[RMDB]
RNA sequence: GGGAACGACUCGAGUAGAGUCGAAAAGCCCUCCGCUUCGGCGGAGGGCAAACAACUUACCGCCCUCUCAAUAAGAAGUUGAAAGAGAGGGCGGUUUGCGAAAAAGCAAAAGCUUCGGCUUUUGCAACAUACCCUCUGUGUUCGCACAGAGGGUAUGAAAAGAAACAACAACAACAAC
Reactivity to DMS in 0.01 (KOAc 150mM, MgCl2 10mM, bicine 150mM(pH8.5), 24C), signal-to-noise 2, nucleotides 027 to 126: g020c000c000c000u000c010c000g020c020u010u020c210g020g010c000g020g000a010g010g070g050c000a000a010a020c030a090a220c030u000u000a010c000c010g020c000c010c000u020c000u000c010a060a120u010a120a090g000a080a190g020u040u000g000a160a180a150g000a010g000a030g000g000g000c010g000g000u000u000u000g000c110g000a030a100a080a090a090g010c000a000a000a000a010g020c000u000u000c190g070g010c000u000u000u010u000g020c000a090a080
Reactivity to 2A3 in 0.01 (KOAc 150mM, MgCl2 10mM, bicine 150mM(pH8.5), 24C), signal-to-noise 1, nucleotides 027 to 126: g000c000c000c050u020c020c010g020c030u050u030c170g140g000c020g030g030a040g050g010g080c000a000a000a000c000a020a000c010u020u020a010c000c000g000c000c020c010u000c000u000c000a070a090u230a210a060g180a140a070g160u180u200g080a170a060a000g010a000g010a010g040g000g000c010g000g020u000u000u000g000c000g020a040a000a020a020a000g000c000a000a000a000a000g000c000u060u090c180g080g000c000u080u040u000u000g000c000a020a030
The record gives the reactivity of an RNA of 177 nucleotides to DMS and 2A3. For 2A3, 1,151 sequencing reads were counted. The DMS profile rests on 1,455 reads.